RNA sequence: GGGAACGACUCGAGUAGAGUCGAAAACCUCACUACAUUUUAGUGUUCCUAAAGAAUUUGUGACAGGUACAGUAAAACGUAUUGCAAGGUUUAUCAGUUCCUAUAAACAGGUAAAUAACAAUAUAUGAAAAGCAAAGACUGUUCGCAGUCUUUGCAAGACUUAUAUGGCGUUCGCGCCAUAUAAGUCAAAAGAAACAACAACAACAAC
Reactivity to 2A3 in 0.01 (KOAc 150mM, MgCl2 10mM, bicine 150mM(pH8.5), 24C), signal-to-noise 4, nucleotides 027 to 156: c000c010u010c010a010c010u030a000c000a050u000u010u010u050a080g040u010g000u060u040c000c010u080a100a120a070g120a220a250u160u230u210g140u130g040a070c070a050g000g010u010a010c000a040g090u020a020a020a000a000c010g020u000a010u040u040g000c070a060a050g010g000u020u010u030a120u100c040a020g010u040u010c000c020u070a080u130a070a090a010c060a020g060g070u100a080a060a090u160a120a080c030a110a040u110a020u050a040u210g050a070a140a030a000g010c000a000a000a000g000a000c000u000g000u010u030c110g010c120a000g010u000c000u000u000u000g010c000a000a000
Reactivity to DMS in 0.01 (KOAc 150mM, MgCl2 10mM, bicine 150mM(pH8.5), 24C), signal-to-noise 1, nucleotides 027 to 156: c020c010u000c000a070c000u020a000c020a020u000u000u000u000a010g020u020g020u000u000c020c030u020a160a090a160g010a130a170u000u020u010g020u000g000a250c160a070g070g010u000a010c010a030g020u010a010a010a030a010c060g030u000a010u000u010g070c040a100a010g050g030u000u000u000a060u000c040a120g000u000u000c010c070u000a200u010a150a080a110c030a080g020g000u010a040a040a070u010a030a090c020a040a090u020a070u000a180u000g010a090a050a120a080g000c000a000a020a010g010a030c000u000g020u000u020c300g050c010a040g020u000c010u000u000u000g020c000a020a000